[RMDB]
RNA sequence: GGGAACGACUCGAGUAGAGUCGAAAACUCAAGGCGCGCAUGCCCGACGGCGAGGAUCUCGUCGUGACCCAUGGCGAUGCCUGCUUGCCGAAUAUCAUGGUGGAAAAUGGCCGCUUUUCUGGAUUCAUCGACUGUGGCCGGCUGGGUGUGGCGGACCGCUAUCAGGACAUAGCGUUGGCUACCCGUGAUAUUGCUGAAGAGCUUGGCGGCGAAUGGGCUGACCGCUUCCUCGUGCUUUACGGUAUCGCCGCUCCCGAUUCGCAGCGCUAGUCGCCUUCGGGCGACUAAAAAGAAACAACAACAACAAC
Reactivity to 2A3 in 0.01 (KOAc 150mM, MgCl2 10mM, bicine 150mM(pH8.5), 24C), signal-to-noise 2, nucleotides 027 to 266: c060u070c030a010a080g060g000c010g020c000g000c050a020u040g010c000c020c040g030a010c000g020g000c010g000a000g120g080a120u150c020u020c120g010u000c010g030u030g060a170c000c010c010a040u030g060g060c000g090a190u080g000c000c000u000g010c000u000u060g030c010c040g020a020a000u010a010u070c020a020u030g030g010u030g110g050a060a050a060a100u050g030g010c000c000g030c000u020u050u020u090c070u130g070g000a080u140u070c030a060u070c090g050a030c030u040g000u030g030g000c020c000g000g030c030u040g020g020g090u050g060u030g010g010c030g000g010a020c000c020g000c030u020a030u060c060a080g090g030a010c020a140u030a000g010c000g020u070u040g100g010c020u060a040c000c000c000g030u000g000a000u040a030u040u070g030c000u080g050a120a050g010a000g020c020u080u090g030g010c000g020g000c000g010a020a040u050g030g010g000c020u030g010a010c010c060g000c020u040u010c000c000u030c010g020u070g090c040u080u050u080a050c010g010g000u040a060u100c060g000c020c000g010c000u060c000c010c000g010a110u110u090c060g030c050a040g050c050g020c010
Reactivity to DMS in 0.01 (KOAc 150mM, MgCl2 10mM, bicine 150mM(pH8.5), 24C), signal-to-noise 5, nucleotides 027 to 266: c040u010c010a020a090g000g010c040g020c100g020c060a060u000g010c040c020c080g010a100c170g000g000c000g010a020g000g010a090u010c060u010c180g010u000c000g010u000g000a140c100c160c020a030u030g010g020c020g000a080u000g010c010c010u000g000c030u000u000g020c300c010g000a060a040u000a040u000c050a030u000g000g010u000g000g000a060a050a090a180u020g000g010c010c020g010c060u000u000u000u010c060u010g010g010a150u020u020c120a090u010c090g000a060c040u000g010u000g010g000c060c010g010g000c180u000g000g010g020u000g020u010g010g010c010g000g000a040c110c020g000c100u000a020u000c110a080g010g000a100c300a080u000a010g010c010g000u000u000g010g000c010u000a080c100c010c010g010u000g000a040u000a030u000u000g000c030u010g000a120a300g000a040g000c030u000u000g010g010c010g010g010c030g000a150a060u000g000g000g010c020u010g000a050c050c080g000c120u000u000c050c020u000c040g010u010g020c060u000u000u010a160c190g000g000u000a050u000c040g010c000c000g000c000u000c010c010c010g000a100u010u000c090g010c080a070g010c060g020c110

Notes:
Structure probing data (2A3 and DMS) for a 307-nucleotide construct. It was measured as part of the RMDB library POS240. The DMS profile rests on 14,044 reads. Reactivities are given for positions 27 through 266. For DMS the reverse transcriptase was MarathonRT.